[RMDB]
RNA sequence: GGGAACGACUCGAGUAGAGUCGAAAACUCGCGAACCCAUCGAGGCGUGGGGAGCGACAUGAAUCAGCCUCGAUUAGAUGUGGUCGACAGUACUGCGGCGUACAGCGACCUAGUUAGAAGCCGCAAAACCGGAAGAGAUGACGCUCGACGGACGUCAGAUAAUACUGCUAUUCGUAGCAGUAUUAUCAAAAGAAACAACAACAACAAC
Reactivity to 2A3 in 0.01 (KOAc 150mM, MgCl2 10mM, bicine 150mM(pH8.5), 24C), signal-to-noise 7, nucleotides 027 to 156: c010u020c010g000c000g050a110a070c000c000c000a010u040c050g010a010g020g000c020g030u030g000g030g010g000a030g010c020g050a050c040a140u250g120a120a110u120c060a050g010c000c010u000c010g020a090u100u160a050g100a120u130g100u070g060g010u020c010g020a090c030a050g000u010a010c010u100g020c000g010g020c000g010u020a010c020a030g010c000g010a030c000c020u000a010g010u000u030a030g020a180a010g000c000c000g000c000a010a010a000a100c090c030g070g030a130a010g050a040g010a060u120g020a020c040g020c060u020c060g050a050c020g040g010a020c010g020u030c020a000
Reactivity to DMS in 0.01 (KOAc 150mM, MgCl2 10mM, bicine 150mM(pH8.5), 24C), signal-to-noise 4, nucleotides 027 to 156: c030u000c010g020c070g000a090a300c020c000c030a150u010c040g010a050g090g050c040g030u000g020g000g020g010a210g000c030g020a230c110a070u010g000a160a150u010c100a130g020c010c010u000c010g000a100u000u020a070g000a090u010g020u000g020g010u000c010g020a110c030a130g020u000a050c050u010g020c040g030g000c020g000u000a100c070a220g020c010g010a030c020c000u010a070g010u000u000a120g010a100a110g020c010c000g070c020a030a050a110a060c040c010g000g000a130a070g010a140g000a170u000g010a030c020g010c020u010c020g000a120c010g030g010a040c010g010u010c020a100
Source: RMDB library OK3TST, as collected in RNAgym. The record gives the reactivity of an RNA of 207 nucleotides to 2A3 and DMS. For 2A3, 7,804 sequencing reads were counted. The RNA was probed in 150 mM KOAc, 10 mM MgCl2 and 150 mM bicine (pH 8.5) at 24 C.